[RMDB]
An RNA of 207 nucleotides, treated with 2A3 and DMS and read out base by base. Source: RMDB library OK3TST, as collected in RNAgym. The DMS profile rests on 6,150 reads. Conditions: 150 mM KOAc, 10 mM MgCl2 and 150 mM bicine (pH 8.5), 24 C. The 2A3 profile rests on 12,265 reads.
RNA sequence: GGGAACGACUCGAGUAGAGUCGAAAAGACGGCAGUUCGGAACUAUAAGGACAACGAACAGAUCCCAAGUUGUCCUUUUAACUGGACUGAGUACAGUUAGUUGAAUAGCAUACUCUUGGGAUCUGUUGUAUGCUAUAUAGUUCUAACUGUACUGUCAGCAUUAAUCAUCAUUCGUGAUGAUUAAUGCAAAAGAAACAACAACAACAAC
Reactivity to 2A3 in 0.01 (KOAc 150mM, MgCl2 10mM, bicine 150mM(pH8.5), 24C), signal-to-noise 9, nucleotides 027 to 156: g010a000c000g010g020c000a000g010u040u100c100g040g010a010a020c010u020a020u030a120a110g100g040a110c030a090a030c130g120a020a010c010a010g000a000u010c010c000c000a000a010g080u130u040g030u090c010c000u000u000u010u010a010a000c010u040g080g030a000c010u020g020a040g210u180a170c010a010g000u010u010a010g010u000u040g060a060a060u100a130g010c040a030u060a260c020u020c000u050u020g000g000g000a000u000c000u000g000u010u010g010u010a070u050g010c000u000a010u000a000u000a190g030u020u000c000u000a000a000c000u000g000u040a220c040u110g010u010c010a010
Reactivity to DMS in 0.01 (KOAc 150mM, MgCl2 10mM, bicine 150mM(pH8.5), 24C), signal-to-noise 2, nucleotides 027 to 156: g020a080c030g020g030c000a020g010u010u000c030g060g010a030a080c070u000a050u010a050a110g020g010a040c020a030a070c060g010a050a070c010a040g000a040u000c010c010c000a040a170g010u000u000g000u000c020c020u010u000u010u000a010a080c030u020g040g020a080c020u000g020a250g050u010a090c020a030g010u010u000a020g030u010u000g010a080a070u010a030g030c050a050u000a100c050u000c030u020u010g000g040g010a030u000c010u000g010u000u000g010u010a020u000g020c020u000a140u000a030u010a050g030u000u000c000u010a010a020c000u000g000u000a030c020u000g000u000c010a140